[RMDB]
RNA sequence: GGGAACGACUCGAGUAGAGUCGAAAACAGUCAACGUGAAGGCGGGCCAGACCAUCGCCGCAUUCUACCAGAGCACCGUCAUGAUCUUUGGCACGAUGGCUCGCUACAUUCCCAGAGUUAGGGAAAAACUAAUACGGGCAUUCGUGCCCGUAUUAGUAAAAGAAACAACAACAACAAC
Reactivity to DMS in 0.01 (KOAc 150mM, MgCl2 10mM, bicine 150mM(pH8.5), 24C), signal-to-noise 3, nucleotides 027 to 126: c120a130g020u000c070a030a090c130g020u000g000a070a130g000g020c020g000g030g000c050c030a090g000a120c100c060a110u000c130g000c040c050g010c090a040u000u000c100u010a100c040c050a060g000a060g010c100a040c010c060g020u000c140a070u000g040a040u010c030u000u010u000g010g000c020a040c080g000a120u000g000g000c000u020c040g010c080u010a010c130a150u000u000c000c000c000a190g010a120g010u000u000a070g000g010g030a040a090a120a070
Reactivity to 2A3 in 0.01 (KOAc 150mM, MgCl2 10mM, bicine 150mM(pH8.5), 24C), signal-to-noise 2, nucleotides 027 to 126: c030a000g090u040c020a070a010c090g050u100g150a140a040g030g000c000g010g010g010c030c030a050g070a070c020c020a070u100c090g040c040c030g050c010a020u110u000c020u100a100c020c050a020g010a000g050c020a020c120c070g110u150c050a100u140g050a060u050c020u070u010u040g030g030c060a010c110g050a040u020g020g000c010u000c020g000c000u040a000c010a090u030u030c000c040c020a010g000a040g070u120u190a050g020g010g090a000a210a000a000